[RMDB]
RNA sequence: GGGAACGACUCGAGUAGAGUCGAAAAUCCUCCUUUCUUCUUCUUGCAUCGAUCCACUUUCCGAGUUGCUCUUCUCUCCCCCUCCGGGGUCUCCUCGAAUCGGGCUGGCUCAUCCUCGAUUGCGAGCGUAUCUCUGUGUUCGCACAGAGAAAAAGAAACAACAACAACAAC
Reactivity to 2A3 in 0.01 (KOAc 150mM, MgCl2 10mM, bicine 150mM(pH8.5), 24C), signal-to-noise 9, nucleotides 027 to 129: u010c000c000u080c000c010u050u050u030c000u030u000c010u030u010c010u030u080g020c010a060u030c040g090a060u030c030c010a070c040u050u070u030c030c000g020a030g080u040u040g040c020u010c000u100u010c040u000c010u020c010c000c000c000c000u010c010c010g010g000g010g020u010c020u020c010c000u010c010g030a020a030u020c010g000g020g000c030u030g030g000c010u010c030a060u040c010c010u020c010g050a060u010u130g060c020g020a010g020c040g040u080a120
Reactivity to DMS in 0.01 (KOAc 150mM, MgCl2 10mM, bicine 150mM(pH8.5), 24C), signal-to-noise 7, nucleotides 027 to 129: u000c020c010u010c070c050u010u010u000c000u040u020c000u020u010c050u000u060g040c060a050u020c040g040a120u050c040c040a070c040u010u010u010c040c010g030a100g040u010u020g000c070u030c050u010u000c010u000c040u010c000c000c010c010c010u000c050c010g000g000g000g000u000c020u000c050c010u000c040g020a100a040u020c030g000g000g030c070u020g000g020c020u000c050a040u010c020c010u020c060g030a090u040u000g020c070g020a000g030c100g020u010a090

Structure probing data (2A3 and DMS) for a 170-nucleotide construct.
DMS adducts were read by reverse transcription with MarathonRT.
The RNA was probed in 150 mM KOAc, 10 mM MgCl2 and 150 mM bicine (pH 8.5) at 24 C.
High 2A3 reactivity points to a flexible backbone, as in loops and unpaired stretches.
For DMS, 81,907 sequencing reads were counted.